[RMDB]
RNA sequence: GGGAACGACUCGAGUAGAGUCGAAAAGAUAUGGACGAUAGUAGGGAGAAUGUGUCGGAAACGACAUUCGCGAAACCUAUCAUCGUCCUAAGUCAAACCUCACUCGCGGUUCGCCGCGAGUGAGGAACUAUAGCAACAGCUUCGGCUGUUGCUAUAGAAAAGAAACAACAACAACAAC
Reactivity to 2A3 in 0.01 (KOAc 150mM, MgCl2 10mM, bicine 150mM(pH8.5), 24C), signal-to-noise 2, nucleotides 027 to 126: g010a010u040a030u140g010g000a000c000g000a000u020a080g030u000a030g040g040g080a160g050a040a080u170g100u060g090u140c000g030g050a050a050a020c020g000a010c000a020u030u020c040g000c060g110a220a150a270c000c000u020a030u090c020a000u010c010g000u000c000c000u000a010a010g000u000c020a060a060a110c010c000u000c000a010c000u000c010g000c050g100g110u100u140c300g120c160c000g000c000g010a000g000u020g000a000g000g020a000a000
Reactivity to DMS in 0.01 (KOAc 150mM, MgCl2 10mM, bicine 150mM(pH8.5), 24C), signal-to-noise 2, nucleotides 027 to 126: g000a040u000a300u000g000g000a000c000g000a000u000a030g020u000a020g000g030g000a150g010a030a040u000g010u010g000u000c000g000g000a080a040a150c020g010a020c010a040u000u000c100g020c090g000a100a090a210c020c010u000a000u000c040a010u000c000g030u000c000c000u020a000a040g010u000c000a070a080a210c000c000u020c000a000c010u000c000g020c030g000g000u000u000c280g030c010c040g010c020g000a000g030u000g000a010g010g020a000a030

Source: RMDB library TTRDEL, as collected in RNAgym.
The record gives the reactivity of an RNA of 177 nucleotides to 2A3 and DMS.
DMS adducts were read by reverse transcription with MarathonRT.
The RNA was probed in 150 mM KOAc, 10 mM MgCl2 and 150 mM bicine (pH 8.5) at 24 C.